[RMDB]
RNA sequence: GGGAACGACUCGAGUAGAGUCGAAAAUGGAGGAGGAUUUUAGCACUCAUGGUUUUCCUUCGGUGCGUACAACCACAACAAGCACUCGUCCCGAUCAACCCGAUGGUGAGGUGUUGCACACGUCCAAGUAUACCCCAUAUUUCGAUAUGGGGUAUACAAAAGAAACAACAACAACAAC
Reactivity to 2A3 in 0.01 (KOAc 150mM, MgCl2 10mM, bicine 150mM(pH8.5), 24C), signal-to-noise 2, nucleotides 027 to 126: u130g020g020a010g030g000a040g020g010a030u040u050u070u160a070g030c030a010c030u110c050a090u080g050g000u000u030u040u070c000c000u010u050c030g020g000u010g040c000g000u060a060c040a080a100c080c030a030c030a140a000c030a060a060g030c020a010c010u040c020g080u010c000c030c020g030a080u090c020a000a090c030c000c050g060a050u070g030g070u060g020a030g000g040u050g030u080u110g060c050a020c000a010c070g060u000c020c010a080a000
Reactivity to DMS in 0.01 (KOAc 150mM, MgCl2 10mM, bicine 150mM(pH8.5), 24C), signal-to-noise 9, nucleotides 027 to 126: u010g010g000a060g010g010a050g010g000a050u000u000u010u000a100g020c080a060c070u000c070a080u010g010g000u000u000u010u000c020c010u000u000c070g010g020u000g010c030g010u010a070c140a090a100c070c050a060c110a070a080c120a090a130g010c040a040c040u000c080g010u000c010c010c010g000a090u010c120a060a090c050c020c050g010a100u000g010g020u000g000a080g000g010u000g010u000u000g010c070a070c080a080c150g000u000c030c040a070a180

The record gives the reactivity of an RNA of 177 nucleotides to 2A3 and DMS. Conditions: 150 mM KOAc, 10 mM MgCl2 and 150 mM bicine (pH 8.5), 24 C. Reactivities are given for positions 27 through 126. For DMS, 18,876 sequencing reads were counted. The data come from the RNA Mapping Database (RMDB), library OK2TRN. For 2A3 the reverse transcriptase was SuperScript II with manganese.